[RMDB]
Structure probing data (DMS and 2A3) for a 207-nucleotide construct. For DMS, 1,937 sequencing reads were counted.

RNA sequence: GGGAACGACUCGAGUAGAGUCGAAAAAGAUGGCAGGUUCACCCCGUACGGUGCGGAAGUUCGCGCUUCCGUGAAACGCGAAAAUCGGACGGUGGCUGCAAGUCGCAUCGCACAACCGCGGCAAGUGUUAACCUGGACCUCUUCGGAGGUCCAGGAAGACUGUAAAAAGAUUCGUCUUUUUACAGUCAAAAGAAACAACAACAACAAC
Reactivity to DMS in 0.01 (KOAc 150mM, MgCl2 10mM, bicine 150mM(pH8.5), 24C), signal-to-noise 1, nucleotides 027 to 156: a190g020a090u000g000g040c090a010g010g020u000u010c070a120c000c000c030c030g090u000a040c000g020g010u000g060c010g010g000a040a060g010u000u020c220g010c300g010c000u010u010c010c070g000u000g010a060a040a040c040g000c070g020a070a050a100a050u010c030g050g020a030c010g020g070u010g020g020c000u000g010c080a060a060g010u010c030g030c040a100u020c020g210c000a090c070a060a070c010c050g040c010g040g000c030a060a090g020u000g030u010u000a140a250c010c010u000g070g020a020c050c000u010c000u010u000c300g010g030a060g020g000u000c000c000a000g010g010a020a040
Reactivity to 2A3 in 0.01 (KOAc 150mM, MgCl2 10mM, bicine 150mM(pH8.5), 24C), signal-to-noise 3, nucleotides 027 to 156: a010g080a060u170g050g000c010a020g020g050u210u220c020a050c020c020c000c050g000u040a020c020g010g010u030g000c000g000g030a030a000g000u140u280c110g020c020g000c110u000u000c010c000g020u020g060a050a110a020c160g040c020g100a060a020a020a150u120c020g020g030a030c130g030g010u050g050g000c030u030g010c020a020a020g020u030c020g010c030a070u080c040g000c040a100c020a130a030c080c030g010c000g000g050c080a120a070g030u020g040u210u120a030a040c000c010u010g020g020a010c000c010u020c010u000u030c070g060g000a010g000g000u000c010c000a000g000g000a010a010